[RMDB]
RNA sequence: GGGAACGACUCGAGUAGAGUCGAAAAGGUUCGAUUCGUCGAACCAAAAAAUCCUAAGUCACCAACAGCUAUUACGAGCAUCGAUCGUAUCGGAAACGAUACGGGAGCUCAGUAAUAGACAUGGUGAUAUGGAAAAAAAGUACCGUUCGCGGUACAAGAUACCCUAAUGGUUCGCCAUUAGGGUAUCAAAAGAAACAACAACAACAAC
Reactivity to 2A3 in 0.01 (KOAc 150mM, MgCl2 10mM, bicine 150mM(pH8.5), 24C), signal-to-noise 4, nucleotides 027 to 156: g010g000u000u000c000g000a010u070u080c110g020u010c060g070a010a050c010c070a040a010a000a000a020a000u060c040c010u090a150a040g000u010c000a010c000c010a030a100c050a250g020c020u010a000u010u000a000c010g000a000g000c040a220u280c050g090a090u050c000g030u010a000u000c000g000g040a110a040a060c020g010a000u000a000c000g010g020g000a000g000c000u010c030a010g000u000a000a010u000a000g030a070c030a050u010g000g010u000g000a000u000a030u040g000g050a040a040a040a020a010a030a030g010u030a000c010c010g010u030u060c250g000c000g090g000u000a010c010a000a010
Reactivity to DMS in 0.01 (KOAc 150mM, MgCl2 10mM, bicine 150mM(pH8.5), 24C), signal-to-noise 2, nucleotides 027 to 156: g020g030u000u020c010g020a040u000u000c270g020u020c030g000a000a020c000c000a000a010a060a070a060a110u000c000c000u000a080a250g020u000c000a020c010c000a020a150c050a300g020c010u000a000u000u000a000c030g000a020g000c000a190u010c160g010a090u010c020g040u000a020u010c000g030g000a220a080a270c010g040a010u000a020c020g020g000g010a060g010c000u000c000a100g080u000a010a030u000a010g020a060c040a300u000g000g010u000g020a000u000a210u010g030g030a000a000a060a090a080a150a210g020u000a000c000c030g020u020u000c250g010c050g000g000u000a000c020a020a120
An RNA of 207 nucleotides, treated with 2A3 and DMS and read out base by base. Source: RMDB library RNAMAK, as collected in RNAgym. For 2A3, 4,621 sequencing reads were counted. The reactions ran in a buffer of 150 mM KOAc, 10 mM MgCl2 and 150 mM bicine (pH 8.5), at 24 C.